[RMDB]
RNA sequence: GGGAACGACUCGAGUAGAGUCGAAAACCUCGCAUCGCAAGUUCGUGCUUGCGACUUACACGUAGGGCGAGGGGUGGGCGAAAGUUGCCAUGAGACCGUAACUUUCGUAGUGAUUGAUAAAGGGGCACAUGCCCUGACUAGUUCGCUAGUCAGGGAACUCUAACCCAGGCUUCGGCCUGGGUUAGAGAAAAGAAACAACAACAACAAC
Reactivity to 2A3 in 0.01 (KOAc 150mM, MgCl2 10mM, bicine 150mM(pH8.5), 24C), signal-to-noise 2, nucleotides 027 to 156: c010c010u050c040g090c030a080u050c010g000c000a000a000g010u130u260c160g210u300g100c000u000u010g020c010g000a010c010u020u120a100c100a070c230g200u130a120g000g120g070c060g000a020g000g010g010g030u090g000g070g000c020g010a040a000a010g000u010u010g050c000c020a070u100g070a040g040a090c000c110g010u000a000a000c000u000u000u030c040g020u010a080g030u030g060a150u090u070g010a040u090a090a100a030g030g020g010g010c060a020c050a080u130g020c010c000c020u000g000a000c000u000a000g040u100u050c140g090c120u000a000g010u000c000a000g040g010g000a000a000
Conditions: 150 mM KOAc, 10 mM MgCl2 and 150 mM bicine (pH 8.5), 24 C. This 207-nucleotide RNA was probed chemically with 2A3. It was measured as part of the RMDB library M2RFPK. 2A3 adducts were read by reverse transcription with SuperScript II with manganese. For 2A3, 602 sequencing reads were counted.